[RMDB]
RNA sequence: GGGAACGACUCGAGUAGAGUCGAAAAGAAAGAAAGAAAGAAGCCGGCUCUGCUAGUUUAACGGCAACCACGUUGAAAUUACAACGAAAGAAGCUCGCACUCAACUUCAACGGCUUAACGAGUGCAAAAAAGAAGUAUCACUUCGGUGAUACUUCAAGUAUGUGCACUCGUUCGCGAGUGCACAUACAAAAGAAACAACAACAACAAC
Reactivity to 2A3 in 0.01 (KOAc 150mM, MgCl2 10mM, bicine 150mM(pH8.5), 24C), signal-to-noise 1, nucleotides 027 to 156: g060a010a140a040g020a060a070a020g100a070a150a000g070a050a000g080c140c010g070g010c030u010c020u050g000c050u020a050g060u190u090u080a050a030c020g000g000c000a010a180c000c020a010c020g000u010u000g020a080a120a050u200u110a170c030a000a010c030g030a050a070a070g040a000a000g040c080u130c160g000c000a000c010u000c000a060a070c010u030u000c000a020a020c050g040g000c030u040u040a020a020c000g000a010g010u020g000c080a000a000a100a000a000a000g020a000a010g000u000a000u000c000a000c000u030u110c150g000g000u010g000a000u000a000c000u010u000c010a000a000
The record gives the reactivity of an RNA of 207 nucleotides to 2A3. For 2A3 the reverse transcriptase was SuperScript II with manganese. It was measured as part of the RMDB library M2RFPK. For 2A3, 1,045 sequencing reads were counted. Values cover nucleotides 27 to 156. High 2A3 reactivity points to a flexible backbone, as in loops and unpaired stretches. The reactions ran in a buffer of 150 mM KOAc, 10 mM MgCl2 and 150 mM bicine (pH 8.5), at 24 C.